[RMDB]
RNA sequence: GGGAACGACUCGAGUAGAGUCGAAAAAAGCGGGAAGCCGUUCCCGAGAUCAGUUCUCCUUCUGGUAAGGGCCCAGGUAGAACACCUGGUCGAUAGGCCGCAGGUGCAAGGUCGGCGACGGCCUCAGGUCUCCUAGAUCAUUCGUGAUCUAGGAGACAAAAGAAACAACAACAACAAC
Reactivity to DMS in 0.01 (KOAc 150mM, MgCl2 10mM, bicine 150mM(pH8.5), 24C), signal-to-noise 3, nucleotides 027 to 126: a060a050g020c040g000g010g000a150a120g020c010c020g000u010u000c010c000c010g000a090g020a030u010c050a090g000u010u010c020u000c010c020u000u000c050u010g000g010u010a070a120g030g000g010c090c010c000a040g000g020u000a040g010a150a270c080a040c020c000u000g010g010u000c020g000a160u040a080g020g010c010c030g000c110a050g000g010u000g000c120a110a060g000g010u010c020g000g000c180g020a170c040g000g020c010c010u000c100a100g000
Reactivity to 2A3 in 0.01 (KOAc 150mM, MgCl2 10mM, bicine 150mM(pH8.5), 24C), signal-to-noise 4, nucleotides 027 to 126: a000a000g180c110g030g010g060a120a030g080c000c000g020u030u030c000c000c000g000a030g000a080u090c060a060g040u060u020c020u010c020c010u070u050c050u100g040g050u110a130a120g030g020g030c020c010c010a000g000g030u060a060g030a170a010c000a020c030c010u000g010g020u010c010g040a070u080a090g050g020c000c020g000c060a030g000g040u070g030c040a060a040g030g020u030c010g010g020c020g010a030c010g000g000c000c010u040c000a040g070